RNA sequence: GGGAACGACUCGAGUAGAGUCGAAAAUCUCCCGCCUGGACGGCCGCGAAAUCGGCGAGUGCACUCUCAAAUUCUCCAAGGACAACCAGACAUGCCCGGACCCGACCGCGUUCAAGGAGGAGCUGCACACUCCUUAGGGAUUCGUCCCUAAGGAGUGAAAAGAAACAACAACAACAAC
Reactivity to DMS in 0.01 (KOAc 150mM, MgCl2 10mM, bicine 150mM(pH8.5), 24C), signal-to-noise 4, nucleotides 027 to 126: u010c080u010c010c010c010g010c080c050u000g000g000a100c100g000g000c050c030g000c060g020a050a110a120u000c060g000g010c030g000a090g020u000g010c050a040c050u000c040u000c060a070a080a140u010u000c040u010c020c050a080a220g010g010a060c070a040a110c060c060a090g000a090c100a070u000g010c010c020c020g000g020a100c030c000c010g000a060c050c060g010c100g010u000u000c050a040a170g000g010a080g010g000a060g000c120u000g000c080a180
Reactivity to 2A3 in 0.01 (KOAc 150mM, MgCl2 10mM, bicine 150mM(pH8.5), 24C), signal-to-noise 3, nucleotides 027 to 126: u030c010u000c010c000c000g020c000c030u050g050g020a020c040g080g030c030c030g030c020g040a050a050a100u080c020g040g010c020g020a020g000u050g020c030a010c020u030c000u030c060a070a070a210u110u030c040u000c010c010a030a030g040g010a030c010a050a070c040c020a030g040a090c030a070u110g030c010c020c010g040g030a070c000c010c020g030a030c010c020g040c030g020u050u040c030a050a020g020g010a010g010g010a000g040c030u050g000c040a010
Conditions: 150 mM KOAc, 10 mM MgCl2 and 150 mM bicine (pH 8.5), 24 C. Structure probing data (DMS and 2A3) for a 177-nucleotide construct. Values cover nucleotides 27 to 126. DMS adducts were read by reverse transcription with MarathonRT.